[RMDB]
RNA sequence: GGGAACGACUCGAGUAGAGUCGAAAAUGCACAACUCCAGGGCUAGCGUCAAAAGUACCGCCCUGUGUCUUGUCUCCUCGUGGUGUCGAAGCAAUGGCGGAGUCCUAGGCAUCGCACCUCUAUCCGGGGUAAUAAAACCGUUCGCGGUUUUAUUACCAAAAGAAACAACAACAACAAC
Reactivity to 2A3 in 0.01 (KOAc 150mM, MgCl2 10mM, bicine 150mM(pH8.5), 24C), signal-to-noise 1, nucleotides 027 to 126: u070g010c050a020c010a030a030c020u050c020c010a000g010g020g030c040u100a030g030c050g130u070c040a110a070a220a180g050u070a060c000c000g040c000c000c000u000g030u000g020u020c000u010u000g010u000c000u050c040c010u030c040g070u040g000g040u060g100u150c050g010a070a010g000c050a040a120u180g020g050c080g240g190a080g080u120c030c000u080a080g000g210c010a000u000c000g000c010a010c020c010u060c070u080a120u040c060c050g250g000
Reactivity to DMS in 0.01 (KOAc 150mM, MgCl2 10mM, bicine 150mM(pH8.5), 24C), signal-to-noise 1, nucleotides 027 to 126: u010g010c180a030c050a040a020c010u010c010c000a090g000g000g000c030u010a170g030c070g010u000c210a090a090a140a150g010u020a040c110c100g000c010c010c010u000g000u020g010u010c070u000u020g020u000c020u000c010c050u030c140g020u000g000g020u010g030u020c040g010a050a070g010c020a020a070u010g020g000c030g000g010a130g010u020c000c030u010a130g010g000c010a050u020c030g010c030a030c010c010u020c000u000a080u000c050c070g000g030
An RNA of 177 nucleotides, treated with 2A3 and DMS and read out base by base. Values cover nucleotides 27 to 126. For DMS the reverse transcriptase was MarathonRT. High DMS reactivity at an A or C suggests that its Watson-Crick edge is free.